An RNA of 177 nucleotides, treated with DMS and read out base by base. The data come from the RNA Mapping Database (RMDB), library OK2TST. Values cover nucleotides 27 to 126. The DMS profile rests on 2,416 reads.
[RMDB]
RNA sequence: GGGAACGACUCGAGUAGAGUCGAAAAGCAGUUUCUAGACGGUGAGGCUGUUCCAAUCGAGCCUAGUUUGUUUAGCACUGGUCGCUUUGAGCUUGACGUGCGCCACUACCUUGAUGAAGCAGAGAGAGAGGUCUCUAGUAUUCGUACUAGAGACCUCAAAAGAAACAACAACAACAAC
Reactivity to DMS in 0.01 (KOAc 150mM, MgCl2 10mM, bicine 150mM(pH8.5), 24C), signal-to-noise 3, nucleotides 027 to 126: g030c060a090g000u000u000u000c020u000a090g010a120c110g010g030u000g010a070g000g000c020u000g020u000u010c060c090a090a100u000c140g000a070g000c080c040u010a100g020u000u010u000g000u010u000u010a080g010c220a050c040u000g010g000u000c060g000c020u000u000u000g010a090g030c020u010u010g020a090c070g030u010g000c020g040c050c100a030c060u000a090c110c040u000u010g000a060u000g020a090a090g020c050a110g010a140g010a100g010a220